Source: RMDB library OK3TST, as collected in RNAgym. An RNA of 207 nucleotides, treated with 2A3 and read out base by base. The reactions ran in a buffer of 150 mM KOAc, 10 mM MgCl2 and 150 mM bicine (pH 8.5), at 24 C.

RNA sequence: GGGAACGACUCGAGUAGAGUCGAAAAUUAAUGACAUCUGCAAAGUCCCAUUAGCUGUGGAAGGUAAGAUGUUUACAGAUUGCAGGUUGCAGAGAUUAGAACGUAUUUUGGGGGGACCAUUAUUUUGUCAUACUUUCCGCAUCACUCUGAUAAAACAGUCCAUCGGUAAUUUCGAUUACCGAUGGACAAAAGAAACAACAACAACAAC
Reactivity to 2A3 in 0.01 (KOAc 150mM, MgCl2 10mM, bicine 150mM(pH8.5), 24C), signal-to-noise 1, nucleotides 027 to 156: u040u030a030a070u010g010a080c000a100u020c030u060g020c040a050a000a020g040u000c090c000c040a060u130u130a030g010c070u040g000u000g030g000a020a060g080g000u040a140a040g030a030u080g030u070u070u070a000c040a020g100a130u000u020g070c030a000g000g130u140u100g100c000a000g000a000g060a080u040u100a120g100a280a060c100g020u150a060u000u120u210u120g000g000g000g010g000g000a000c000c000a000u030u110a190u000u090u090u050g010u070c010a000u010a040c010u040u000u000c030c000g070c030a100u140c000a060c030u160c010u120g030a060u230a110a120a000a010c110a040